[RMDB]
RNA sequence: GGGAACGACUCGAGUAGAGUCGAAAAGAUAUGGAUAUAGGCCUCGAUAAGCAUCAUUCGGAAACGAAUGAAUGCUUUUGACGAGGACUAUAUCCUAAGUCAAAACAAAUCUCUUCGGAGAUUUGAACAGUUAAUACCUCUUCGGAGGUAUUAACUGAAAAGAAACAACAACAACAAC
Reactivity to 2A3 in 0.01 (KOAc 150mM, MgCl2 10mM, bicine 150mM(pH8.5), 24C), signal-to-noise 1, nucleotides 027 to 126: g020a000u060a020u120g000g000a000u010a020u020a020g040g000c040c020u000c050g120a280u180a300a000g010c000a000u000c000a010u000u020c000g000g000a030a010a000c000g000a020a000u010g000a010a090u000g000c010u030u020u040u110g250a170c030g000a000g050g000a010c000u000a000u000a000u000c010c010u000a000a000g000u000c020a010a030a090a200c000a000a020a030u000c010u000c000u050u110c300g210g000a020g000a020u000u020u030g000a100a040
Reactivity to DMS in 0.01 (KOAc 150mM, MgCl2 10mM, bicine 150mM(pH8.5), 24C), signal-to-noise 2, nucleotides 027 to 126: g000a030u010a110u010g000g000a020u000a010u000a000g010g000c000c000u000c010g030a100u020a010a010g000c010a010u000c000a030u000u000c000g020g010a020a020a040c010g000a010a010u000g000a060a060u000g000c000u000u000u010u010g020a200c130g010a020g010g010a030c000u000a000u000a000u000c000c000u000a000a050g000u000c010a140a090a130a300c010a000a010a010u000c000u000c000u000u020c240g010g010a010g010a010u000u010u000g000a140a270